[RMDB]
RNA sequence: GGGAACGACUCGAGUAGAGUCGAAAAUCAAUGGUCAGGUCAUCCGAUUCACGCAUUUCCCGCAUGGUGCGAAGGAUAAGCCGCGCCAUGCCGUCUUCGACUGCUGGUUGGACGGAUGGGGCGCGAGGCCCAGUGCCAUGUUCGCAUGGCACUGGGCAAAAGAAACAACAACAACAAC
Reactivity to DMS in 0.01 (KOAc 150mM, MgCl2 10mM, bicine 150mM(pH8.5), 24C), signal-to-noise 2, nucleotides 027 to 126: u020c120a090a080u000g000g020u000c050a100g010g010u000c060a060u010c020c030g010a090u010u030c020a050c060g000c070a040u020u000u000c020c020c030g020c070a010u010g000g010u030g000c000g050a090a150g000g010a090u000a100a100g000c170c010g000c000g000c020c000a030u000g020c000c040g000u000c010u010u030c060g000a070c020u010g030c100u000g040g000u010u000g000g030a040c010g000g010a070u000g000g010g010g040c010g000c120g000a090g000
Reactivity to 2A3 in 0.01 (KOAc 150mM, MgCl2 10mM, bicine 150mM(pH8.5), 24C), signal-to-noise 2, nucleotides 027 to 126: u090c030a010a100u100g030g080u110c070a010g060g000u040c020a040u000c000c040g000a110u100u070c000a000c090g050c040a060u040u050u080c030c000c000g010c010a040u090g060g070u040g010c010g020a140a070g090g040a040u070a190a050g130c050c010g020c020g020c000c020a000u040g030c000c000g000u010c000u140u160c040g070a060c020u040g070c080u180g210g040u040u020g040g010a020c000g000g010a050u050g000g020g000g010c060g030c060g000a080g160
The record gives the reactivity of an RNA of 177 nucleotides to DMS and 2A3. It was measured as part of the RMDB library OK2TST. For DMS, 1,537 sequencing reads were counted. Reactivities are given for positions 27 through 126. DMS adducts were read by reverse transcription with MarathonRT.